[RMDB]
RNA sequence: GGGAACGACUCGAGUAGAGUCGAAAACGCAUUGAACCUGUAUGUGCACUAAUUCACGGUUCACCAGGGACUGGUAAAUCCCUUGCCACAAUGAUUAUUGGCAGAAAACUUGCAGAGUGUGAGGGUUCUGAUGUCUAUUCUCUACCACCAGAUCCAGAUACACUCCCGCUUUCGAGCGGGAGUGUAUAAAAGAAACAACAACAACAAC
Reactivity to 2A3 in 0.01 (KOAc 150mM, MgCl2 10mM, bicine 150mM(pH8.5), 24C), signal-to-noise 1, nucleotides 027 to 156: c010g030c000a070u050u150g070a000a000c000c000u100g050u050a020u040g010u120g030c120a050c070u010a000a220u230u100c200a040c080g000g000u000u000c110a000c120c120a000g000g000g040a010c040u120g210g000u040a150a180a110u070c000c050c000u130u090g080c110c000a040c030a020a220u200g010a020u270u200a040u180u000g010g000c020a000g070a000a070a000a040c090u070u090g000c070a040g020a000g090u070g030u000g000a110g000g040g050u070u000c020u070g070a020u000g000u000c000u010a040u030u080c040u000c000u030a000c000c010a010c000c120a010g000a000u070c000c040a000g000